An RNA of 177 nucleotides, treated with 2A3 and DMS and read out base by base.
DMS adducts were read by reverse transcription with MarathonRT.
For DMS, 1,162 sequencing reads were counted.
Reactivities are rounded to 0.1 and cut off at 0 and 3.
The RNA was probed in 150 mM KOAc, 10 mM MgCl2 and 150 mM bicine (pH 8.5) at 24 C.

RNA sequence: GGGAACGACUCGAGUAGAGUCGAAAAUUGACUCAACACGGGAACAUUUACCAGGUACGAACAUAAGUGUGUAAGACAGAUUGAUAGCUCUUUCUCGAAUCUAUGGGUGGUGGUGCAUGGCCGUUCUGUAUUUCAGGAAGUUCGCUUCCUGAAAUACAAAAGAAACAACAACAACAAC
Reactivity to 2A3 in 0.01 (KOAc 150mM, MgCl2 10mM, bicine 150mM(pH8.5), 24C), signal-to-noise 2, nucleotides 027 to 126: u050u060g000a010c000u000c030a030a000c010a010c040g040g000g010a110a010c030a050u020u050u080a140c020c000a010g070g020u070a030c000g030a180a000c030a110u130a150a120g030u060g020u040g010u130a010a010g060a030c030a010g080a060u100u120g090a060u090a050g050c040u000c040u020u030u020c030u000c010g100a070a080u030c000u000a000u060g030g000g020u030g010g020u010g030g010u010g020c030a040u050g050g000c020c000g000u040u010c000u010
Reactivity to DMS in 0.01 (KOAc 150mM, MgCl2 10mM, bicine 150mM(pH8.5), 24C), signal-to-noise 2, nucleotides 027 to 126: u010u010g020a110c030u010c000a040a030c040a100c050g010g020g020a090a150c170a170u000u020u000a100c050c030a070g000g010u020a070c130g000a060a070c060a040u020a050a130g010u000g010u010g000u010a050a060g030a060c140a040g000a060u010u000g020a080u000a090g000c040u000c040u000u000u000c020u000c060g010a040a070u000c020u000a040u030g020g020g020u010g010g000u010g010g010u000g020c080a040u000g020g000c030c030g020u000u000c060u000